[RMDB]
RNA sequence: GGGAACGACUCGAGUAGAGUCGAAAAAGCCAAAUUAAUCCUACAAUCAGGUAUUAUGUUUUUAAACCAAGUUGAGUGAAUUGGUAGUGGACUUGGGAAAUCUUCCCCAGCAGAAUCUGGAUGAAUGCUCGCAUCAUUCAUUCGUGAAUGAUGCGAGAAAAGAAACAACAACAACAAC
Reactivity to DMS in 0.01 (KOAc 150mM, MgCl2 10mM, bicine 150mM(pH8.5), 24C), signal-to-noise 1, nucleotides 027 to 126: a120g040c020c040a030a090a120u010u020a100a020u010c000c000u050a000c210a090a020u020c100a050g020g000u030a040u010u010a050u020g000u000u000u000u000u020a000a200a150c000c100a000a020g070u010u020g000a110g010u010g020a000a100u000u010g000g050u020a030g070u000g050g000a040c040u010u020g050g000g000a030a080a000u020c170u000u000c000c020c000c020a130g000c210a030g000a090a030u020c000u000g000g000a100u000g020a020a050u100g000
Reactivity to 2A3 in 0.01 (KOAc 150mM, MgCl2 10mM, bicine 150mM(pH8.5), 24C), signal-to-noise 2, nucleotides 027 to 126: a000g080c080c000a050a100a000u250u200a010a100u050c000c000u050a000c020a180a050u230c100a130g040g040u020a060u050u070a030u160g180u120u140u000u150u230a010a160a000c000c000a000a050g000u110u110g060a040g080u140g060a100a160u260u190g060g010u040a060g040u110g210g000a060c000u030u030g000g000g050a050a020a020u140c080u010u000c000c000c000c000a000g000c000a000g030a100a000u000c010u000g040g000a000u060g090a000a120u080g070